The record gives the reactivity of an RNA of 177 nucleotides to 2A3 and DMS. It was measured as part of the RMDB library OK2TRN. Values cover nucleotides 27 to 126.

RNA sequence: GGGAACGACUCGAGUAGAGUCGAAAACUAGGUUCAGCUUAUACUCGUGCUCACGGAUGCUGAUGCUCGAUCAACAGCGCGGGGGCAUGCUGUCGCAGCGCCAAUAUUCGGGUCAGUCGUGACUAGACGAUGCUGCUGGAUUCGUCUGGCGGUAUCGAAAAGAAACAACAACAACAAC
Reactivity to 2A3 in 0.01 (KOAc 150mM, MgCl2 10mM, bicine 150mM(pH8.5), 24C), signal-to-noise 9, nucleotides 027 to 126: c020u030a060g060g000u070u080c040a010g000c020u060u050a050u030a100c020u020c020g020u020g000c010u010c010a020c010g080g030a140u110g000c010u010g000a030u040g010c030u050c090g160a280u120c030a020a050c010a020g000c010g000c010g020g010g000g000g000c010a020u060g020c020u030g010u020c020g000c040a010g000c000g000c010c000a040a050u070a070u070u050c020g010g020g020u020c030a020g040u040c020g030u020g010a020c010u010a020g010a050
Reactivity to DMS in 0.01 (KOAc 150mM, MgCl2 10mM, bicine 150mM(pH8.5), 24C), signal-to-noise 9, nucleotides 027 to 126: c110u000a080g010g010u000u000c070a080g010c020u000u000a130u000a060c050u000c030g020u000g010c040u000c020a050c040g010g010a090u010g020c020u000g000a080u000g010c070u000c120g000a090u010c060a040a080c070a040g010c020g020c020g000g000g000g000g000c020a040u000g010c110u000g010u000c070g010c120a050g010c030g010c030c020a060a100u000a090u000u000c030g010g000g000u000c060a060g010u000c030g010u000g000a150c030u000a060g010a240
2A3 adducts were read by reverse transcription with SuperScript II with manganese.